[RMDB]
RNA sequence: GGGAACGACUCGAGUAGAGUCGAAAAUUGAUACGCAGUAUUGCCGCUUACUCACAAUGCCUUUUUGCAGACCCGUCUCCAUUAUCAUUUUUCGGAUUCGUGACAACCGCAACAUGGAUUCAAAACACGAAAUCGGGCGUUUCGACGCCCGAUUUCGAAAAGAAACAACAACAACAAC
Reactivity to 2A3 in 0.01 (KOAc 150mM, MgCl2 10mM, bicine 150mM(pH8.5), 24C), signal-to-noise 1, nucleotides 027 to 126: u030u020g050a080u060a120c050g000c070a030g090u200a050u010u160g000c010c000g000c100u070u090a080c020u000c040a000c040a210a250u050g000c000c000u080u100u000u000u240g000c000a000g000a090c000c020c000g060u000c000u040c030c000a060u120u230a120u070c030a000u000u090u000u180u180c020g000g000a020u070u070c000g040u000g040a120c010a040a040c090c000g000c010a000a000c000a100u000g000g000a000u000u000c020a000a000a150a120c060a070